This 177-nucleotide RNA was probed chemically with DMS. It was measured as part of the RMDB library OK2TST. The RNA was probed in 150 mM KOAc, 10 mM MgCl2 and 150 mM bicine (pH 8.5) at 24 C.
RNA sequence: GGGAACGACUCGAGUAGAGUCGAAAAUAAAGAUGUUGACAAUCCUGUACUUAUGGGUUGGGAUUAUCCUAAGUGUGAUCGUGCUAUGCCAAACCUACUACGUAUUGUUAGUAGUUUGGUAUUAGCCUAAGCAACGAUCGUUCGCGAUCGUUGCUUAAAAAGAAACAACAACAACAAC
Reactivity to DMS in 0.01 (KOAc 150mM, MgCl2 10mM, bicine 150mM(pH8.5), 24C), signal-to-noise 1, nucleotides 027 to 126: u020a050a160a100g010a060u010g030u000u000g030a120c080a060a030u000c000c000u000g010u030a060c200u020u020a070u020g000g000g050u010u000g000g000g000a080u000u000a060u000c010c030u010a080a110g030u060g000u000g000a110u000c110g010u000g010c010u000a010u000g000c000c000a000a000a030c160c060u000a000c000u010a010c020g000u000a170u000u010g020u020u000a000g010u000a020g000u010u000u010g000g040u000a010u000u000a010g010c000c070